Conditions: 150 mM KOAc, 10 mM MgCl2 and 150 mM bicine (pH 8.5), 24 C.
Structure probing data (2A3 and DMS) for a 177-nucleotide construct.
2A3 adducts were read by reverse transcription with SuperScript II with manganese.

RNA sequence: GGGAACGACUCGAGUAGAGUCGAAAACUGCGGAAUUGUUACUAAUGCAAUUGCAGAUGGUAUUCAACGUAGCAUCACUCAAGAAAUGAUUGAUGAUACAUAUCGUAUUCACAGGUGAUAAUAUUCACCGUGAGCAUGAGUUCGCUCAUGCUCACGGAAAAGAAACAACAACAACAAC
Reactivity to 2A3 in 0.01 (KOAc 150mM, MgCl2 10mM, bicine 150mM(pH8.5), 24C), signal-to-noise 2, nucleotides 027 to 126: c000u000g020c060g070g140a100a040u080u030g020u040u090a100c050u140a080a070u110g030c030a050a300u100u160g010c000a000g050a120u070g030g060u070a080u080u160c060a080a050c100g000u000a000g010c000a010u000c000a000c000u010c010a040a050g090a180a210a110u080g010a000u020u000g010a020u010g000a000u000a070c020a000u070a000u090c020g040u050a170u130u020c020a010c050a050g070g000u000g090a020u030a240a070u150a140u130u060c020a000
Reactivity to DMS in 0.01 (KOAc 150mM, MgCl2 10mM, bicine 150mM(pH8.5), 24C), signal-to-noise 2, nucleotides 027 to 126: c040u000g030c010g040g030a160a060u000u000g000u010u010a300c070u010a130a250u000g000c020a300a160u020u010g000c010a040g020a100u000g000g000u000a020u000u000c070a090a090c210g010u000a010g030c030a000u000c020a010c070u000c010a070a250g010a060a030a110u000g000a040u000u000g000a010u000g000a100u000a020c020a120u030a060u010c070g020u000a100u000u010c030a040c160a100g010g030u010g010a060u000a100a050u000a050u000u010c020a100